[RMDB]
RNA sequence: GGGAACGACUCGAGUAGAGUCGAAAAAGUAUGGAGCUUACGAGCUCCAUACAAAGGCCCUCCAGCUACCACGUGAAGCGUAUACUCUCAGUCUUUGCGGAGGUCGUUCUACUGGGCCAAGAGGCAAAGGUGAGUACCUUUUCGAAGGUACUCACCUAAAAGAAACAACAACAACAAC
Reactivity to 2A3 in 0.01 (KOAc 150mM, MgCl2 10mM, bicine 150mM(pH8.5), 24C), signal-to-noise 3, nucleotides 027 to 126: a010g000u000a000u000g010g000a000g000c030u060u090a070c210g030a010g000c000u000c000c000a000u000a000c000a000a000a010g020g000c020c010c000u050c030c000a020g000c000u000a000c020c000a000c010g020u020g010a010a000g020c050g060u070a060u140a270c060u130c010u030c160a110g300u140c040u040u000u000g010c000g010g080a240g080g000u000c000g010u010u070c030u080a100c090u040g020g000g000c000c010a020a030g160a020g070g000c090a090a120
Reactivity to DMS in 0.01 (KOAc 150mM, MgCl2 10mM, bicine 150mM(pH8.5), 24C), signal-to-noise 1, nucleotides 027 to 126: a110g000u030a000u000g040g000a010g030c000u000u010a160c250g000a010g000c000u000c000c000a020u000a010c000a020a040a100g000g040c000c000c000u000c030c020a020g000c020u000a020c020c020a120c070g040u000g000a020a000g000c090g030u080a090u010a070c230u040c160u020c100a280g020u020c000u000u000u000g000c010g000g030a040g020g000u000c040g000u000u070c000u000a090c180u000g000g020g040c000c000a040a000g050a140g000g000c300a090a080